[RMDB]
RNA sequence: GGGAACGACUCGAGUAGAGUCGAAAAAGCUGCCCGAAAUCGGCGGAAAGGACCCCGCUAUCGGGAGGGGCUAGCAGCGAGGGUUGCCGCUCCAGCCGCGCUAUGAAGCAGGCAUAGCAGAUUUACAAUAGUGAGGUAUCUUCGGAUACCUCACUAUAAAAGAAACAACAACAACAAC
Reactivity to DMS in 0.01 (KOAc 150mM, MgCl2 10mM, bicine 150mM(pH8.5), 24C), signal-to-noise 1, nucleotides 027 to 126: a090g020c050u000g000c000c050c020g000a080a150a150u000c130g010g030c030g020g000a090a090a160g020g010a190c120c060c000c010g010c040u010a060u000c050g000g040g000a060g020g000g000g020c020u000a050g010c130a000g000c000g000a090g000g020g010u000u000g010c040c100g010c050u020c010c010a080g020c020c030g000c150g010c050u020a050u010g000a090a010g000c050a080g000g040c030a020u000a040g010c030a120g000a040u010u020u020a080c220a090
The data come from the RNA Mapping Database (RMDB), library OK2TRN. The record gives the reactivity of an RNA of 177 nucleotides to DMS. The DMS profile rests on 797 reads. The RNA was probed in 150 mM KOAc, 10 mM MgCl2 and 150 mM bicine (pH 8.5) at 24 C.